Chemical mapping of a 177-nucleotide RNA with 2A3 and DMS. The RNA was probed in 150 mM KOAc, 10 mM MgCl2 and 150 mM bicine (pH 8.5) at 24 C. Source: RMDB library TTRDES, as collected in RNAgym.
RNA sequence: GGGAACGACUCGAGUAGAGUCGAAAAGAUAUGGAUCACCAGGGAGCUCGUAUUCGGAAACGAAUACAGAGCUUUGAUCUGGCUGAUCCUAAGUCAAAACUGUGCCCCUGUUCGCAGGGGCACAGAAGUUAUUCAGUAUGUUCGCAUACUGAAUAACAAAAGAAACAACAACAACAAC
Reactivity to 2A3 in 0.01 (KOAc 150mM, MgCl2 10mM, bicine 150mM(pH8.5), 24C), signal-to-noise 2, nucleotides 027 to 126: g000a000u020a010u030g000g000a000u000c000a000c010c000a000g010g010g000a000g000c010u010c010g000u000a000u000u000c000g000g000a010a010a000c010g000a000a000u000a000c030a030g010a010g000c000u020u130u010g000a000u000c000u000g040g000c170u020g010a000u000c000c000u000a000a000g010u000c000a000a010a050a170c010u000g010u000g020c000c020c010c000u020g090u070u100c300g030c100a020g000g000g010g010c000a000c000a000g000a000a000
Reactivity to DMS in 0.01 (KOAc 150mM, MgCl2 10mM, bicine 150mM(pH8.5), 24C), signal-to-noise 4, nucleotides 027 to 126: g000a010u000a010u010g000g000a010u000c010a050c010c000a010g000g000g000a000g030c000u000c000g000u000a000u000u000c000g010g010a010a010a030c010g010a020a010u000a000c000a050g010a010g010c000u000u000u010g000a030u000c000u000g000g010c300u000g000a020u000c000c000u000a000a080g000u000c010a080a090a140a210c000u000g010u000g020c000c000c000c000u000g020u010u010c270g020c010a010g000g030g000g010c030a000c000a000g010a050a120